[RMDB]
RNA sequence: GGGAACGACUCGAGUAGAGUCGAAAAAGAAGAGACCGCAGCGGAAGCAGGGACUCUUCAUGAGUAUCAUUCUUGCUGUUGCUGCUUGGGCCAUUUUUCACCGUGUCACUCUUGUCAGCAACUUCAACAUAUGAUCAUAGUUCGCUAUGAUCAUAUGAAAAGAAACAACAACAACAAC
Reactivity to DMS in 0.01 (KOAc 150mM, MgCl2 10mM, bicine 150mM(pH8.5), 24C), signal-to-noise 9, nucleotides 027 to 126: a110g000a040a040g010a050g010a300c020c030g010c130a090g020c020g010g030a120a100g010c010a110g010g000g000a080c010u000c000u000u000c080a060u010g010a080g010u010a100u010c140a130u000u000c040u000u000g010c030u000g000u000u000g010c010u000g010c020u000u000g010g010g010c090c030a060u000u000u010u010u010c140a110c180c110g000u000g000u010c180a110c030u000c020u000u000g010u010c020a040g010c050a030a050c030u000u000c050a080a160
Reactivity to 2A3 in 0.01 (KOAc 150mM, MgCl2 10mM, bicine 150mM(pH8.5), 24C), signal-to-noise 9, nucleotides 027 to 126: a000g030a010a000g020a010g010a020c010c030g050c230a070g020c030g080g080a110a020g000c030a080g030g000g070a170c010u000c000u020u020c010a020u090g020a020g090u190a080u250c060a090u110u060c030u050u090g000c020u020g010u030u030g000c000u000g000c000u000u020g010g010g000c020c010a040u070u050u020u100u140c100a100c070c050g030u020g020u050c020a020c030u040c030u070u040g120u290c010a010g010c010a020a020c050u030u020c030a050a060